[RMDB]
RNA sequence: GGGAACGACUCGAGUAGAGUCGAAAAAUGGUAUCCCGUGUCUGCGGGAGCCGCAGAGCAUGUGAGUGAGUCAUGGUGUUCCCCAGAUCUAACCUUCGCCCUUGACGCUACAGCGCGGUGCUGCCGCCUUGCCAAAGGGAUUCGUCCCUUUGGCAAGAAAAGAAACAACAACAACAAC
Reactivity to DMS in 0.01 (KOAc 150mM, MgCl2 10mM, bicine 150mM(pH8.5), 24C), signal-to-noise 3, nucleotides 027 to 126: a090u010g010g010u010a100u000c000c000c010g010u000g020u010c120u000g010c030g010g000g010a100g020c010c010g020c120a050g010a120g000c050a040u000g020u000g000a090g010u000g020a070g010u010c020a040u010g010g010u000g000u000u010c010c000c000c090a110g000a060u010c090u000a070a130c070c020u000u000c080g020c030c020c020u000u010g020a100c050g020c020u010a050c080a070g010c110g010c040g010g010u010g020c050u000g000c030c050g000c070
Reactivity to 2A3 in 0.01 (KOAc 150mM, MgCl2 10mM, bicine 150mM(pH8.5), 24C), signal-to-noise 2, nucleotides 027 to 126: a010u190g050g000u130a240u100c000c000c030g020u000g030u000c150u180g000c000g010g010g030a040g030c020c010g000c030a030g030a030g060c050a020u050g040u040g070a100g050u130g050a020g020u070c020a030u090g020g000u090g080u080u030c000c000c000c010a020g020a100u050c060u110a060a090c000c030u060u050c030g010c030c000c010u030u040g030a020c010g020c020u070a060c040a060g040c020g000c040g050g040u070g050c020u050g000c010c030g010c020

The data come from the RNA Mapping Database (RMDB), library OK2TST. An RNA of 177 nucleotides, treated with DMS and 2A3 and read out base by base. Values are in units of 0.01, from 0 to 300, in steps of 10. Values cover nucleotides 27 to 126. For DMS the reverse transcriptase was MarathonRT. The RNA was probed in 150 mM KOAc, 10 mM MgCl2 and 150 mM bicine (pH 8.5) at 24 C.